[RMDB]
RNA sequence: GGGAACGACUCGAGUAGAGUCGAAAACUGCAGAGACAUCUCCACCCUGGGGUGGCGUCGCCAGAAUACACCGACCCGUUACAGGGAAAUUGGCUACUUGGCUGGACAACUACGUCUCUCUUCUUUUUCAACGUGUAAGGUUCGCCUUACACGUUGAAAAAGAAACAACAACAACAAC
Reactivity to 2A3 in 0.01 (KOAc 150mM, MgCl2 10mM, bicine 150mM(pH8.5), 24C), signal-to-noise 1, nucleotides 027 to 126: c010u030g040c080a000g040a000g000a000c030a000u000c080u000c090c000a090c000c000c060u300g160g100g030g000u080g030g030c090g000u060c000g020c000c000a120g060a120a000u000a000c140a000c040c010g080a120c060c000c000g040u030u050a080c140a040g000g200g230a000a300a240u230u180g000g030c000u010a010c030u090u080g000g020c000u030g130g000a000c000a060a000c050u190a000c100g000u050c000u000c000u000c040u000u050c000u130u080u000u000